[RMDB]
RNA sequence: GGGAACGACUCGAGUAGAGUCGAAAAGGUCCCGGGUCGAAGACAGCGGGGAGGUAGGCUUAGAAGCAGCCACCCUUUAAAGAGUGCGUAACAGCUCACCCGCCGAGACUCGGGGCGCCGAAAAUGGGUGCUUACAGAAAUUCGUUUCUGUAAGCACAAAAGAAACAACAACAACAAC
Reactivity to 2A3 in 0.01 (KOAc 150mM, MgCl2 10mM, bicine 150mM(pH8.5), 24C), signal-to-noise 2, nucleotides 027 to 126: g140g000u030c000c000c000g010g000g000u000c010g020a040a000g010a020c010a000g000c010g000g000g000g030a000g000g030u020a030g000g000c000u000u010a000g000a010a000g000c000a000g000c000c000a000c000c000c010u000u000u020a000a000a000g000a000g000u000g000c000g000u000a000a000c000a000g000c000u010c000a020c000c000c020g000c000c000g000a000g000a000c000u000c000g000g000g000g000c010g000c000c010g120a110a070a030a060u270g200g020
Reactivity to DMS in 0.01 (KOAc 150mM, MgCl2 10mM, bicine 150mM(pH8.5), 24C), signal-to-noise 5, nucleotides 027 to 126: g000g000u000c000c000c010g010g000g010u000c000g010a040a100g000a040c300a200g000c000g000g020g000g000a010g000g020u000a160g000g010c000u000u000a300g000a150a300g000c010a050g010c010c000a000c010c000c000u010u000u000a000a000a030g000a120g010u000g000c000g000u000a120a180c130a250g000c000u000c000a020c010c000c000g010c000c000g000a020g010a000c000u000c000g000g020g010g000c000g000c020c000g030a060a020a100a110u040g010g000
Annotation
Chemical mapping of a 177-nucleotide RNA with 2A3 and DMS.